An RNA of 207 nucleotides, treated with 2A3 and read out base by base.
RNA sequence: GGGAACGACUCGAGUAGAGUCGAAAAGAAAGAAAGAAAGAAAGGUAUGAAGUCCUAUUCACCCCGGAUAGGAUAAACUUCAUAUUGAUCGUGUAUGUGCUAACGCACAUACACGAAUGCGCAUGCAGAACUGCAUGCAUGAACAUAUGGGGUGCAACUACGGACCAUGAUUCGUCAUGGUCCGUAGAAAAGAAACAACAACAACAAC
Reactivity to 2A3 in 0.01 (KOAc 150mM, MgCl2 10mM, bicine 150mM(pH8.5), 24C), signal-to-noise 2, nucleotides 027 to 156: g050a010a040a000g040a040a120a010g080a020a070a010g060a090a070a050g020g010u020a020u000g000a020a000g000u000c000c000u000a000u010u030c020a070c020c000c000c020g010g000a010u000a000g000g000a020u060a040a010a000c000u000u000c010a010u010a010u070u130g030a100u020c000g000u000g010u000a000u000g030u020g000c050u220a190a010c180g000c020a000c000a000u000a000c010a000c010g000a000a000u030g020c050g000c000a000u020g000c000a010g110a300a100c270u050g000c020a030u030g000c010a010u090g060a080a010c080a140u180a220u240g010g000g000g000u050g050c040a070a070

It was measured as part of the RMDB library OK3TST. For 2A3, 1,231 sequencing reads were counted. For 2A3 the reverse transcriptase was SuperScript II with manganese.